[RMDB]
RNA sequence: GGGAACGACUCGAGUAGAGUCGAAAAGUACAUGGUGAGUAUCGCAUGCAAAAAGUUCAUGCAGGACUGGCGAUGGAUAUUGGUAUUCCAAAAGAAAAUAUCUUUAUUAUGGAAAAUGGAGACGUUCUAGCUUUAACCAGUGACAGUGCGCGUAUUACACUGGAUCAUGAUUCGUCAUGAUCCAGUGAAAAGAAACAACAACAACAAC
Reactivity to DMS in 0.01 (KOAc 150mM, MgCl2 10mM, bicine 150mM(pH8.5), 24C), signal-to-noise 2, nucleotides 027 to 156: g010u000a100c020a060u000g000g000u010g010a180g040u000a090u010c100g040c010a090u000g000c090a070a040a080a120a070g000u000u020c040a100u000g000c050a130g000g010a110c070u000g020g030c020g020a060u000g000g000a080u000a050u000u000g030g040u000a060u000u000c000c040a070a030a060a220g000a100a070a050a080u000a070u000c050u000u000u000a050u070u000a160u000g000g020a030a030a080a030u020g040g010a050g020a040c050g020u000u010c060u010a130g010c030u000u010u000a110a110c040c030a090g020u010g000a090c050a040g040u000g000c100g000c070g020u000a130u000u000a140
Reactivity to 2A3 in 0.01 (KOAc 150mM, MgCl2 10mM, bicine 150mM(pH8.5), 24C), signal-to-noise 3, nucleotides 027 to 156: g060u050a020c040a090u060g020g000u050g020a040g020u080a010u140c060g000c030a010u030g020c020a060a110a140a110a090g060u120u100c020a020u050g010c010a020g000g070a020c020u050g000g000c030g010a030u040g000g030a020u060a080u060u070g060g000u050a130u030u090c000c010a070a130a060a000g070a000a110a040a010u150a060u000c000u050u130u050a150u120u060a090u090g020g000a080a050a050a070u060g030g020a040g010a010c030g010u070u000c040u060a030g000c020u050u120u110a050a040c040c000a030g010u000g050a040c020a040g030u030g060c070g020c060g020u100a080u130u180a020
Record summary
An RNA of 207 nucleotides, treated with DMS and 2A3 and read out base by base. The reactions ran in a buffer of 150 mM KOAc, 10 mM MgCl2 and 150 mM bicine (pH 8.5), at 24 C. Source: RMDB library OK3TST, as collected in RNAgym. For 2A3, 1,513 sequencing reads were counted. In probing experiments dimethyl sulfate is read out at A N1 and C N3, which are open when not base-paired. Values cover nucleotides 27 to 156.